[RMDB]
RNA sequence: GGGAACGACUCGAGUAGAGUCGAAAACAGCUACGUUUCGACGUAGCUGAAAAUAAAACAGGCAAGUACCACCCUGAAAAAGGUACAAAGAUCGAAAGAUCAAAACGGUUCGAUUCGUCGAACCGAAUACUGAAUAGGUGUUCGCACCUAUUCAGUAAAAAGAAACAACAACAACAAC
Reactivity to 2A3 in 0.01 (KOAc 150mM, MgCl2 10mM, bicine 150mM(pH8.5), 24C), signal-to-noise 3, nucleotides 027 to 126: c000a010g000c000u000a000c000g020u000u030u150c190g070a010c000g010u000a000g000c000u000g000a000a010a000a010u120a000a080a010a010c020a020g080g000c030a230a020g000u000a000c000c010a070c010c010c010u040g140a110a020a020a020a040g030g000u000a000c010a020a080a000g000a010u020c010g020a100a030a010g000a000u010c000a010a030a010a040c020g000g010u010u010c000g010a020u010u030c180g030u000c000g090a000a000c010c000g000a010a030
Reactivity to DMS in 0.01 (KOAc 150mM, MgCl2 10mM, bicine 150mM(pH8.5), 24C), signal-to-noise 3, nucleotides 027 to 126: c010a030g000c000u000a000c000g020u000u000u010c150g030a060c000g040u000a000g000c000u010g000a000a030a060a080u010a070a080a120a170c150a040g000g010c140a070a080g020u000a000c000c000a140c040c000c040u000g000a030a060a040a050a080g000g020u020a010c020a140a120a120g000a000u010c000g000a120a070a140g000a010u000c010a070a040a160a140c000g010g000u010u000c000g010a030u000u010c200g000u000c000g010a010a010c000c010g010a030a010